[RMDB]
RNA sequence: GGGAACGACUCGAGUAGAGUCGAAAAUUUGCGGUUCAUCUUCGGCAUUCACCCGCAGGGUACAGAGCGUUAAUGCCAGCAGUAAGGCAACAGGCGCGACAUUUCUCAUAGAUUAUCCCUUACAAAAAGUGAUUAACGUAUUCGUACGUUAAUCACUAAAAGAAACAACAACAACAAC
Reactivity to DMS in 0.01 (KOAc 150mM, MgCl2 10mM, bicine 150mM(pH8.5), 24C), signal-to-noise 6, nucleotides 027 to 126: u000u020u010g020c070g020g010u010u000c070a090u010c050u010u000c070g010g000c040a080u010u010c110a100c100c010c040g000c080a090g010g010g010u010a040c090a070g000a160g000c030g010u000u010a060a120u000g000c020c020a100g030c130a090g000u010a070a100g010g010c040a030a070c150a160g010g010c020g010c030g010a070c100a070u000u010u010c020u010c030a080u000a080g000a100u010u010a140u000c010c000c010u020u000a080c170a060a040a080a090
Reactivity to 2A3 in 0.01 (KOAc 150mM, MgCl2 10mM, bicine 150mM(pH8.5), 24C), signal-to-noise 8, nucleotides 027 to 126: u080u050u110g030c030g030g010u040u080c020a070u010c050u080u060c040g030g000c020a070u070u050c020a060c030c030c010g010c050a060g050g050g010u110a070c050a030g060a010g060c020g020u030u080a070a030u090g010c010c010a010g020c010a040g150u210a210a050g030g010c010a020a010c010a120g040g000c000g000c030g030a020c020a060u050u100u010c030u000c020a040u080a070g050a030u060u060a060u120c010c000c000u050u110a080c080a030a150a020a020
Background: Structure probing data (DMS and 2A3) for a 177-nucleotide construct. It was measured as part of the RMDB libraries RFM100 and RFMREP. 2A3 adducts were read by reverse transcription with SuperScript II with manganese. Values cover nucleotides 27 to 126.